[RMDB]
About this RNA: Structure probing data (DMS and 2A3) for a 177-nucleotide construct. DMS adducts were read by reverse transcription with MarathonRT. The reactions ran in a buffer of 150 mM KOAc, 10 mM MgCl2 and 150 mM bicine (pH 8.5), at 24 C. For DMS, 11,237 sequencing reads were counted. 2A3 adducts were read by reverse transcription with SuperScript II with manganese.

RNA sequence: GGGAACGACUCGAGUAGAGUCGAAAAGAGACUACAGUUAGGCUACGAGCGUACAUGAACACCCCGGGGCUUCCCGUGUGCCAGGACCAUCUUGAAUUUUGGGAGGGCGUCUUUACGGGCCUCACUCCAUCAGUAUGUGGUUCGCCACAUACUGAUGAAAAGAAACAACAACAACAAC
Reactivity to DMS in 0.01 (KOAc 150mM, MgCl2 10mM, bicine 150mM(pH8.5), 24C), signal-to-noise 5, nucleotides 027 to 126: g000a060g010a110c040u010a070c090a070g000u020u020a070g000g000c070u030a070c110g010a070g000c060g010u020a060c100a050u010g000a080a110c150a100c050c010c020c040g010g010g000g000c070u000u000c020c010c010g020u030g020u010g000c030c010a070g010g000a090c040c020a020u020c040u000u020g030a070a140u010u030u050u010g000g020g010a060g010g000g000c120g010u010c040u030u010u030a080c140g000g000g010c020c020u000c030a070c050u010c100
Reactivity to 2A3 in 0.01 (KOAc 150mM, MgCl2 10mM, bicine 150mM(pH8.5), 24C), signal-to-noise 9, nucleotides 027 to 126: g090a010g020a010c050u090a050c100a050g040u090u090a050g070g030c020u060a030c090g010a030g010c040g020u060a040c030a100u140g060a070a020c040a090c030c010c010c020g030g000g000g000c040u100u040c010c000c010g020u050g010u020g060c010c010a040g020g070a030c020c000a040u030c030u110u190g160a290a240u140u120u100u090g040g020g010a060g020g040g000c030g020u000c020u020u080u060a050c060g010g020g000c000c000u010c010a030c010u030c020